[RMDB]
RNA sequence: GGGAACGACUCGAGUAGAGUCGAAAAUAAGAGCAUGUACGAAUCACGAUAUGAGAGUUCCUGGUGAAUCCCGGGUACAAGGAAAGGUAUUAAUCUCCCACUGCCUUCCCUUGCAGUAGGGAUAUAAAUACCAACAAAGCUUCGGCUUUGUUGGUAUAAAAGAAACAACAACAACAAC
Reactivity to DMS in 0.01 (KOAc 150mM, MgCl2 10mM, bicine 150mM(pH8.5), 24C), signal-to-noise 1, nucleotides 027 to 126: u020a050a060g000a100g000c030a060u000g010u010a070c070g010a040a080u010c020a050c070g030a130u020a170u030g000a100g020a300g000u010u010c000c020u000g020g050u010g020a110a080u000c040c030c000g000g020g040u010a020c010a020a020g020g010a020a030a030g000g010u000a030u020u000a130a120u010c090u020c000c000c020a090c140u000g010c000c030u010u000c030c000c010u020u000g000c030a030g040u000a180g000g000g010a010u010a020u000a110a030

Background: This 177-nucleotide RNA was probed chemically with DMS. Values cover nucleotides 27 to 126. For DMS the reverse transcriptase was MarathonRT. The RNA was probed in 150 mM KOAc, 10 mM MgCl2 and 150 mM bicine (pH 8.5) at 24 C.